Structure probing data (2A3 and DMS) for a 177-nucleotide construct. Conditions: 150 mM KOAc, 10 mM MgCl2 and 150 mM bicine (pH 8.5), 24 C. For DMS the reverse transcriptase was MarathonRT. For 2A3 the reverse transcriptase was SuperScript II with manganese.
[RMDB]
RNA sequence: GGGAACGACUCGAGUAGAGUCGAAAAGGUCCUCGUCCUCGUCGUCCGCAUCCUCUUCGUCCUCGUCGUCCGACGAGGACGAGGACGACGACGGCAACGACGCGGCCGACCGCGCACGCGAGGCGCGAAACAAGACAAGGUUCGCCUUGUCUUGUUUAAAAGAAACAACAACAACAAC
Reactivity to 2A3 in 0.01 (KOAc 150mM, MgCl2 10mM, bicine 150mM(pH8.5), 24C), signal-to-noise 8, nucleotides 027 to 126: g060g020u050c000c010u020c010g130u280c000c000u020c000g000u010c000g060u090c030c000g020c070a110u060c010c040u050c020u060u070c030g020u020c000c010u010c010g040u010c020g130u140c140c300g000a010c000g000a000g000g000a000c010g000a000g000g000a000c010g000a000c010g000a050c030g000g010c000a030a020c020g040a020c050g010c040g040g000c010c000g010a030c020c030g010c010g000c000a070c040g220c090g070a230g070g000c010g000c010g040
Reactivity to DMS in 0.01 (KOAc 150mM, MgCl2 10mM, bicine 150mM(pH8.5), 24C), signal-to-noise 7, nucleotides 027 to 126: g010g020u010c000c010u000c020g010u000c000c020u010c100g020u000c010g000u020c030c030g010c170a160u010c020c050u000c030u000u000c040g010u000c000c020u010c020g040u000c010g010u050c240c240g000a020c020g030a020g010g010a010c010g010a010g000g000a010c120g010a040c050g010a090c060g000g000c090a040a050c100g000a030c060g030c160g000g000c020c000g010a090c170c030g000c010g000c010a070c050g020c130g000a120g000g000c010g000c010g000